[RMDB]
RNA sequence: GGGAACGACUCGAGUAGAGUCGAAAAUGGAAAGGGUUCCCGGGGAGUCCCGGUGAGGGGAUACGAGUUCCAUCUACUCCUUAAGGGGGUCGAGGGAACCUUUUCUUACCAAAGGAACGAAGGGCAAGGAAAAGAUAAACUUCGGUUUAUCUUUUCCAAAAGAAACAACAACAACAAC
Reactivity to DMS in 0.01 (KOAc 150mM, MgCl2 10mM, bicine 150mM(pH8.5), 24C), signal-to-noise 2, nucleotides 027 to 126: u010g000g000a030a020a010g020g020g000u000u000c000c010c000g040g020g020g000a140g000u000c020c000c020g020g000u010g010a040g000g000g040g000a070u050a050c270g010a060g000u000u030c170c180a070u000c010u000a040c010u000c010c020u000u000a300a140g010g010g030g020g000u010c040g000a300g000g000g000a000a010c000c000u000u000u000u010c000u000u000a230c010c020a100a080a080g010g010a020a070c090g000a060a050g000g000g010c300a090a140